RNA sequence: GGGAACGACUCGAGUAGAGUCGAAAAGGGCGACCGUCCCUUCCCAUGAGUCCACACGGUAAGCGCCUCUGGCCCGAGGCCGCUCGUCGGGAAUCGGACACUGGAACUAGUACUCUGGUCAAUGCGGUCAGAGAACGGUUUUCGAACCGUUCUCUGAAAAAGAAACAACAACAACAAC
Reactivity to DMS in 0.01 (KOAc 150mM, MgCl2 10mM, bicine 150mM(pH8.5), 24C), signal-to-noise 3, nucleotides 027 to 126: g000g020g000c150g010a070c130c050g000u010c000c010c000u000u000c000c020c020a140u070g010a050g020u000c000c010a160c100a150c010g010g000u010a150a070g050c050g000c010c020u000c040u020g040g000c140c050c070g030a050g000g000c070c040g000c030u000c050g020u020c040g000g000g000a100a050u020c150g050g010a030c040a050c050u020g000g000a080a100c080u000a090g010u020a140c080u000c040u030g010g000u010c040a120a110u020g000c060g010g000
Reactivity to 2A3 in 0.01 (KOAc 150mM, MgCl2 10mM, bicine 150mM(pH8.5), 24C), signal-to-noise 5, nucleotides 027 to 126: g020g000g000c030g040a090c020c000g100u120c020c000c020u010u030c010c000c000a060u130g070a020g030u010c020c010a060c010a020c080g020g020u040a070a030g010c010g010c030c000u010c020u090g100g040c010c000c020g010a010g010g010c030c030g000c000u040c020g040u030c060g000g020g030a040a100u090c040g010g010a010c020a020c060u040g040g030a060a040c030u010a040g050u090a050c020u020c030u050g020g040u060c030a040a030u130g020c030g010g050